[RMDB]
RNA sequence: GGGAACGACUCGAGUAGAGUCGAAAAGAUAUGGAAAUCCCGCAGCUUUUGACGCCUUCGAUUCGGAAACGAAUCCGAGGCGAUAAGCUGAGCGAUUUCCUAAGUCAAAUCGCAGUUCGCUGCGAAAGUCUAUUAUGGAGUUCGCUCCAUAAUAGACAAAAGAAACAACAACAACAAC
Reactivity to 2A3 in 0.01 (KOAc 150mM, MgCl2 10mM, bicine 150mM(pH8.5), 24C), signal-to-noise 4, nucleotides 027 to 126: g000a010u060a020u140g000g040a000a010a000u020c050c050c050g030c000a000g000c000u210u200u240u250g240a140c030g010c000c020u050u050c020g020a010u000u000c000g000g040a080a100a080c010g000a000a020u020c030c090g010a000g010g010c000g000a000u000a010a010g000c000u000g010a010g020c030g010a000u000u010u010c000c000u020a140a040g030u020c020a010a040a210u050c010g000c020a000g010u100u160c220g160c140u010g000c000g010a050a010a010
Reactivity to DMS in 0.01 (KOAc 150mM, MgCl2 10mM, bicine 150mM(pH8.5), 24C), signal-to-noise 5, nucleotides 027 to 126: g000a050u010a300u010g000g010a000a000a010u000c010c060c000g000c000a000g000c000u000u000u000u000g050a260c080g010c000c000u010u000c300g010a010u000u010c000g020g000a110a130a240c000g010a020a000u000c010c100g000a000g010g010c010g010a010u010a000a010g000c000u010g000a020g020c300g000a020u000u000u000c000c000u010a010a090g010u000c040a070a110a130u000c010g000c010a020g000u000u010c280g010c000u000g010c000g000a020a070a080

Notes: Chemical mapping of a 177-nucleotide RNA with 2A3 and DMS. Values are in units of 0.01, from 0 to 300, in steps of 10. The reactions ran in a buffer of 150 mM KOAc, 10 mM MgCl2 and 150 mM bicine (pH 8.5), at 24 C.